[RMDB]
RNA sequence: GGGAACGACUCGAGUAGAGUCGAAAAGGAGGGCAGUUUUUCUGUGUUGCGUGUCGUUAGAGGCCGGUUUUGCGACGCGAGACCUUGAUGCUGAUUCCGGCCUAUUUGCAUCGGUCGUUUGCCUCCAGGCACCUGGCGGGUUCGCUCGCUGGGUGCCAAAAGAAACAACAACAACAAC
Reactivity to DMS in 0.01 (KOAc 150mM, MgCl2 10mM, bicine 150mM(pH8.5), 24C), signal-to-noise 6, nucleotides 027 to 126: g010g000a050g000g010g010c030a040g000u010u020u020u020u030c040u010g020u010g010u000u000g000c020g020u010g010u000c010g010u010u030a070g010a090g000g000c010c000g000g000u010u010u020u030g000c010g000a020c010g000c020g000a110g000a020c010c010u010u040g020a010u010g000c000u000g010a120u020u020c000c010g000g010c010c010u010a040u020u010u010g000c010a010u000c000g000g000u000c020g020u010u020u010g000c010c000u000c010c020a150
Reactivity to 2A3 in 0.01 (KOAc 150mM, MgCl2 10mM, bicine 150mM(pH8.5), 24C), signal-to-noise 9, nucleotides 027 to 126: g030g010a030g010g050g010c050a060g030u040u030u030u130u120c050u070g080u010g010u020u040g010c000g000u010g000u000c010g010u020u100a040g010a040g050g000c000c010g010g030u040u060u150u270g010c000g000a000c000g000c000g010a030g010a010c000c020u050u240g010a010u020g000c020u060g030a080u150u050c000c000g000g000c000c000u040a090u020u090u100g000c010a010u000c000g000g020u010c020g020u070u200u080g040c000c000u000c010c000a010